RNA sequence: GGGAACGACUCGAGUAGAGUCGAAAAUUUUGAUCCAGUCAGUACCAGAGAAGCACCUUGAAGAGUCGCAGUAGAAAUAGUAAACUUCAGUGAUUCUUUUUCCUGAUUUGCUAUCCCGUGCUGGUGCCGUGCAUGCUCCAUUCGUGGAGCAUGCACGAAAAGAAACAACAACAACAAC
Reactivity to DMS in 0.01 (KOAc 150mM, MgCl2 10mM, bicine 150mM(pH8.5), 24C), signal-to-noise 1, nucleotides 027 to 126: u020u010u050u070g040a030u000c010c090a090g020u020c100a200g000u000a040c060c070a090g000a090g020a120a180g040c050a050c080c040u060u010g000a050a020g000a140g000u000c020g010c020a040g030u000a080g000a040a090a040u000a120g050u030a030a080a090c010u020u000c000a090g000u000g000a070u000u000c150u000u010u010u020u000c010c000u000g000a040u000u000u000g040c000u000a020u000c030c080c010g000u040g000c060u020g010g020u000g040c000
Reactivity to 2A3 in 0.01 (KOAc 150mM, MgCl2 10mM, bicine 150mM(pH8.5), 24C), signal-to-noise 1, nucleotides 027 to 126: u050u030u060u150g040a030u020c000c000a010g020u010c070a040g020u120a010c010c010a000g000a000g000a000a000g000c020a070c000c060u070u070g010a000a000g000a000g010u010c060g000c040a020g000u160a000g120a030a060a100u210a000g090u220a030a130a080c020u010u000c040a010g000u000g030a000u030u140c000u060u000u050u000u040c000c000u040g010a120u080u050u080g040c000u070a040u150c050c040c000g050u000g000c000u000g000g010u000g000c000